[RMDB]
RNA sequence: GGGAACGACUCGAGUAGAGUCGAAAAAGCGAGGACCUGGCUGUACGCAUCCAGGUCCUCGCAAAGGUAGACGGCUGGCACCUUAUAAGUUCAGUCAAUACAAAGUAAACAAGGAGCCUAGUAUGAACAAACCGUGGUGCGUUCGCGCACCACGGAACAGUAACAACAGGUUCGCCUGUUGUUACUGAAAAGAAACAACAACAACAAC
Reactivity to 2A3 in 0.01 (KOAc 150mM, MgCl2 10mM, bicine 150mM(pH8.5), 24C), signal-to-noise 1, nucleotides 027 to 156: a000g000c000g010a010g020g000a000c000c000u020g010g050c060u050g010u060a010c240g010c060a000u000c000c010a010g030g000u000c010c000u000c000g000c000a000a000a000g010g000u030a030g020a180c090g020g000c010u040g010g050c010a000c000c030u170u260a230u130a280a010g050u100u000c010a000g000u010c010a010a000u090a050c040a020a070a010g060u100a050a060a030c060a080a040g060g010a020g010c030c050u040a030g070u080a020u150g130a070a090c080a060a040a030c000c000g000u010g060g000u000g000c000g000u030u040c220g000c000g000c060a000c000c000a000c000g000g000a000a000

About this RNA
The record gives the reactivity of an RNA of 207 nucleotides to 2A3. Reactivities are given for positions 27 through 156.